RNA sequence: GGGAACGACUCGAGUAGAGUCGAAAACUUUCUUGUUUCCAGGAUACUGUCCAGAGAAGUCACACAAACUUAGACAUUUCUUCUUCUGAUGUCCACUUGCCAUGACUGUGUGAGGAAGGGAGAGGUCAACCGCGCAGUAGUUCGCUACUGCGCGGUUAAAAGAAACAACAACAACAAC
Reactivity to 2A3 in 0.01 (KOAc 150mM, MgCl2 10mM, bicine 150mM(pH8.5), 24C), signal-to-noise 1, nucleotides 027 to 126: c000u000u080u050c050u000u020g050u000u090u000c000c000a000g000g000a080u120a210c030u020g120u020c000c000a000g000a000g000a050a140g110u020c000a070c000a030c030a030a230a050c100u230u210a110g140a040c000a140u000u120u000c000u110u000c000u100u060c090u030g000a000u030g050u000c000c040a050c170u100u150g100c020c020a100u170g090a260c090u000g010u000g060u050g010a000g030g050a000a090g010g000g000a060g000a000g050g000u090c000

This 177-nucleotide RNA was probed chemically with 2A3. 2A3 adducts were read by reverse transcription with SuperScript II with manganese. Values cover nucleotides 27 to 126. Conditions: 150 mM KOAc, 10 mM MgCl2 and 150 mM bicine (pH 8.5), 24 C.